Structure probing data (2A3 and DMS) for a 177-nucleotide construct. The 2A3 profile rests on 1,275 reads. The reactions ran in a buffer of 150 mM KOAc, 10 mM MgCl2 and 150 mM bicine (pH 8.5), at 24 C.
RNA sequence: GGGAACGACUCGAGUAGAGUCGAAAAGGAGGAGUUCUAGCUACAUCCUGUUCCUUUCCCGACGCCGACUAGGCGUAUAAUACAUUACAGGAUGUAGGACGGGAAGGGAGGUCCGCUGGAACUCAGAACGGACGAUGAUGUUCGCAUCAUCGUCCGUAAAAGAAACAACAACAACAAC
Reactivity to 2A3 in 0.01 (KOAc 150mM, MgCl2 10mM, bicine 150mM(pH8.5), 24C), signal-to-noise 1, nucleotides 027 to 126: g120g070a070g100g000a010g010u000u010c000u020a000g020c000u040a010c010a140u060c000c000u000g080u060u090c000c000u000u000u000c030c010c000g000a020c000g000c000c020g110a300c280u100a080g000g000c000g000u000a000u000a000a000u040a030c020a000u020u070a160c070a090g300g100a060u030g000u010a010g000g040a010c000g020g000g030a030a000g030g000g010a020g030g000u040c050c030g000c000u000g020g010a000a000c010u030c000a030g070a030
Reactivity to DMS in 0.01 (KOAc 150mM, MgCl2 10mM, bicine 150mM(pH8.5), 24C), signal-to-noise 1, nucleotides 027 to 126: g020g010a170g000g000a070g010u000u000c010u010a000g010c010u010a090c090a100u030c020c000u030g000u010u000c010c000u000u000u000c000c000c140g040a050c000g030c000c000g030a140c300u020a200g020g000c000g010u000a010u010a100a150u000a050c070a010u000u010a120c300a210g000g060a010u000g020u000a050g010g010a300c000g000g000g000a030a030g000g020g000a020g000g010u010c130c090g010c010u000g000g010a050a000c040u000c010a050g000a080
Description
Reactivities are rounded to 0.1 and cut off at 0 and 3. The DMS profile rests on 813 reads.